An RNA of 177 nucleotides, treated with 2A3 and DMS and read out base by base. The DMS profile rests on 2,078 reads. For 2A3, 4,790 sequencing reads were counted. For DMS the reverse transcriptase was MarathonRT.

[RMDB]
RNA sequence: GGGAACGACUCGAGUAGAGUCGAAAAGUAAGAUGAUUCGUCAUCUUACGAACCCGAAGAAGCGGCACAUACCGAGCUUCAUACAUCUAAGAGUGCAAAUAAUGGCGCGUGGUUUCGACCACGCGAAGCUAUCGUCCAUAUUCGUAUGGACGAUAGCAAAAGAAACAACAACAACAAC
Reactivity to 2A3 in 0.01 (KOAc 150mM, MgCl2 10mM, bicine 150mM(pH8.5), 24C), signal-to-noise 4, nucleotides 027 to 126: g000u000a000a000g000a010u010g010a010u040u110c130g050u000c080a000u000c000u000u000a000c000g010a010a020c010c010c010g030a080a080g010a010a010g040c070g040g020c060a030c030a130u180a090c060c070g010a060g010c010u000u000c000a040u100a090c050a050u070c040u120a100a060g120a030g090u060g030c060a030a100a060u210a090a100u190g230g000c010g000c010g020u000g000g030u040u050u070c190g050a020c000c000a000c000g000c000g010a000a000
Reactivity to DMS in 0.01 (KOAc 150mM, MgCl2 10mM, bicine 150mM(pH8.5), 24C), signal-to-noise 3, nucleotides 027 to 126: g000u000a000a000g020a020u000g020a020u010u000c180g010u020c000a010u000c010u010u020a000c010g000a110a120c010c010c010g020a080a080g020a060a040g030c020g000g010c040a070c080a080u010a180c090c100g000a080g040c000u010u000c000a110u020a100c100a090u000c110u010a080a120g010a130g000u000g000c030a100a150a070u010a080a080u010g000g030c030g000c000g020u010g020g010u000u000u020c230g010a020c000c000a000c010g000c000g000a040a020